[RMDB]
RNA sequence: GGGAACGACUCGAGUAGAGUCGAAAAGAUAUGGACCGUUGUACGACAUGCUCAAGAAGGGUCGGAAACGACCCGUAAGAGCAACAGCGUACACCGGUCCUAAGUCAAAGUGCUCUUCGGAGCACAACCCGUAUAUUGUCUUCGGACAAUAUACGGGAAAAGAAACAACAACAACAAC
Reactivity to 2A3 in 0.01 (KOAc 150mM, MgCl2 10mM, bicine 150mM(pH8.5), 24C), signal-to-noise 2, nucleotides 027 to 126: g030a030u070a060u170g010g000a000c000c000g010u010u010g000u000a030c020g080a060c160a180u130g000c000u010c000a050a040g070a060a070g050g000g010u020c040g010g000a100a120a040c010g010a000c020c000c000g000u000a000a000g000a000g020c010a020a000c030a020g030c000g010u000a000c000a000c010c010g010g000u010c000c010u000a000a000g000u000c000a080a040a100g010u000g000c000u010c000u080u150c300g150g010a000g000c000a000c000a000a010
Reactivity to DMS in 0.01 (KOAc 150mM, MgCl2 10mM, bicine 150mM(pH8.5), 24C), signal-to-noise 4, nucleotides 027 to 126: g000a050u010a300u010g010g020a000c010c000g040u000u000g010u000a030c000g040a060c090a300u000g010c000u020c010a020a100g040a150a260g000g000g030u000c010g000g000a100a110a300c010g000a010c000c000c000g000u000a040a300g000a000g000c010a020a050c300a130g030c010g010u000a000c020a000c030c000g000g000u000c010c000u010a000a030g000u010c020a130a130a120g010u000g010c000u000c000u000u010c170g040g000a030g010c010a010c000a070a070
An RNA of 177 nucleotides, treated with 2A3 and DMS and read out base by base. For 2A3 the reverse transcriptase was SuperScript II with manganese. For DMS, 3,650 sequencing reads were counted. The reactions ran in a buffer of 150 mM KOAc, 10 mM MgCl2 and 150 mM bicine (pH 8.5), at 24 C. DMS adducts were read by reverse transcription with MarathonRT. The data come from the RNA Mapping Database (RMDB), library TTRDES.